Chemical mapping of a 207-nucleotide RNA with 2A3. The data come from the RNA Mapping Database (RMDB), library RNAMAK.

RNA sequence: GGGAACGACUCGAGUAGAGUCGAAAAGAUAUGGAGGACUGGGAGACUGGCCAACGCGAUGAAACGUCAUCGGAAACGAUGACGUGGAGCGUUGCCAGUCGAAGAACAGUCCUCCUAAGUCAAAACGUGUCCAACAGCUUCGGCUGUUGGACACGAAGUAUGAAAUUAUGUUCGCAUAAUUUCAUACAAAAGAAACAACAACAACAAC
Reactivity to 2A3 in 0.01 (KOAc 150mM, MgCl2 10mM, bicine 150mM(pH8.5), 24C), signal-to-noise 2, nucleotides 027 to 156: g020a010u070a020u090g010g000a000g010g000a000c010u000g000g010g010a070g000a020c010u000g010g060c250c150a010a000c010g000c000g300a300u030g010a000a010a010c000g000u020c010a000u010c000g020g000a090a040a010c000g000a000u000g000a000c000g000u000g000g010a000g010c000g000u000u000g010c020c020a000g000u000c010g000a010a000g010a010a000c000a010g000u000c000c000u000c000c000u000a000a000g000u000c010a000a020a000a140c020g010u000g000u000c000c010a000a000c000a010g020c000u100u160c290g140g010c000u000g000u000u000g000g010a000c000a000c000g010a000a000

The reactions ran in a buffer of 150 mM KOAc, 10 mM MgCl2 and 150 mM bicine (pH 8.5), at 24 C.